RNA sequence: GGGAACGACUCGAGUAGAGUCGAAAACGCCCUCGAUUCGUCGAGGGCGAUGCUGCGUACUACUCAUUCGACGAUCGACACCCACAAAGCUCCCAAAUAGGAGCUUGGUUGUCGGGAGAAUGAGUAUCGCUUCGGCUGCCAUUUUCGAAUGGCAGAAGUUACGCAAUCAUUUCGAUGAUUGCGUAACAAAAGAAACAACAACAACAAC
Reactivity to DMS in 0.01 (KOAc 150mM, MgCl2 10mM, bicine 150mM(pH8.5), 24C), signal-to-noise 1, nucleotides 027 to 156: c060g010c000c000c000u000c000g000a020u000u020c290g030u000c020g020a010g000g120g020c000g000a010u000g000c040u000g030c020g020u000a160c080u000a000c020u010c020a070u000u000c000g000a160c200g050a100u010c010g030a090c010a060c080c020c090a080c090a180a130a060g010c000u010c000c000c000a040a210a280u000a020g010g000a020g040c000u010u000g000g020u010u000g000u010c020g010g000g030a140g030a000a000u010g000a020g020u000a010u000c060g000c000u020u010c020g000g020c010u000g010c000c000a030u000u000u010u010c290g010a070a090u000g010g000c000a000g010a070a110
Reactivity to 2A3 in 0.01 (KOAc 150mM, MgCl2 10mM, bicine 150mM(pH8.5), 24C), signal-to-noise 4, nucleotides 027 to 156: c000g010c000c000c000u000c010g040a050u070u090c280g050u010c000g180a000g030g010g020c010g020a000u050g010c080u050g000c000g040u140a130c040u000a000c030u040c020a020u000u010c030g210a270c000g020a270u040c000g000a000c000a010c000c020c000a040c150a050a140a020g000c000u050c000c020c070a230a300a050u280a210g000g000a000g000c000u000u030g000g000u010u000g000u000c000g000g000g000a020g000a000a000u000g000a000g000u000a020u010c000g000c000u050u090c050g140g010c000u010g000c000c000a000u020u000u060u150c250g160a020a000u010g000g000c010a000g020a060a010
Annotation:
Chemical mapping of a 207-nucleotide RNA with DMS and 2A3. For 2A3 the reverse transcriptase was SuperScript II with manganese. In probing experiments dimethyl sulfate is read out at A N1 and C N3, which are open when not base-paired. The reactions ran in a buffer of 150 mM KOAc, 10 mM MgCl2 and 150 mM bicine (pH 8.5), at 24 C. Values are in units of 0.01, from 0 to 300, in steps of 10.